Chemical mapping of a 177-nucleotide RNA with DMS. Values are in units of 0.01, from 0 to 300, in steps of 10. The reactions ran in a buffer of 150 mM KOAc, 10 mM MgCl2 and 150 mM bicine (pH 8.5), at 24 C.
RNA sequence: GGGAACGACUCGAGUAGAGUCGAAAAAAGUGCCGCACCGGGCAGUUGAGCCGGAGCGGCUAGGGGUGGAGCCGAGUUCCGCGAGGAACCCGGCCGGGCAACUCAACCGGCCCGAACCCGACAGCUCUACCAAUUGCCAUUUCGAUGGCAAUUGGUAAAAAGAAACAACAACAACAAC
Reactivity to DMS in 0.01 (KOAc 150mM, MgCl2 10mM, bicine 150mM(pH8.5), 24C), signal-to-noise 2, nucleotides 027 to 126: a150a060g000u010g000c000c000g010c020a060c020c000g000g000g010c040a090g000u030u000g000a070g000c010c060g000g000a000g030c030g000g000c000u000a000g000g000g000g000u000g030g020a210g040c030c000g040a040g040u000u000c000c000g080c240g000a170g010g000a000a010c000c000c010g000g000c010c010g010g010g050c000a000a060c000u000c300a070a100c300c300g000g000c000c000c000g000a110a020c000c000c000g000a170c000a090g010c000u040c080